[RMDB]
RNA sequence: GGGAACGACUCGAGUAGAGUCGAAAAGAUAUGGAGCCAGGCCGGGGUGGAACUACUCUCGGGCAUAGUUAUCGGAAACGAUAACUAUGUCUCUAGCGUGGAGCCACAAGAAUUGGCUCCUAAGUCACAUUAGUCAAAUGUUCGCAUUUGACUAAUGAAAAGAAACAACAACAACAAC
Reactivity to 2A3 in 0.01 (KOAc 150mM, MgCl2 10mM, bicine 150mM(pH8.5), 24C), signal-to-noise 2, nucleotides 027 to 126: g040a030u120a060u230g000g000a000g000c000c020a020g040g000c070c040g160g040g180g020u010g010g000a080a040c010u010a010c010u020c000u010c040g010g000g000c000a000u000a000g000u000u000a000u000c020g050g040a140a050a050c000g000a000u010a000a010c000u000a000u000g010u030c010u000c010u040a000g010c000g010u010g030g030a050g000c000c000a020c010a010a030g070a040a100u080u020g000g010c000u010c000c000u000a070a020g060u050c020a020
Reactivity to DMS in 0.01 (KOAc 150mM, MgCl2 10mM, bicine 150mM(pH8.5), 24C), signal-to-noise 6, nucleotides 027 to 126: g010a060u000a300u020g010g010a030g010c000c010a030g000g020c300c070g000g000g020g010u000g000g010a050a070c010u000a020c010u000c010u000c270g010g000g000c000a000u010a000g000u000u000a010u000c000g000g000a110a120a270c010g010a010u000a000a000c000u010a000u000g010u010c000u000c030u000a020g010c120g010u000g010g010a060g010c010c010a010c040a150a150g000a120a300u020u000g000g000c000u000c000c000u000a020a090g010u000c080a200

Source: RMDB library TTRINS, as collected in RNAgym. Structure probing data (2A3 and DMS) for a 177-nucleotide construct. For DMS the reverse transcriptase was MarathonRT. Conditions: 150 mM KOAc, 10 mM MgCl2 and 150 mM bicine (pH 8.5), 24 C.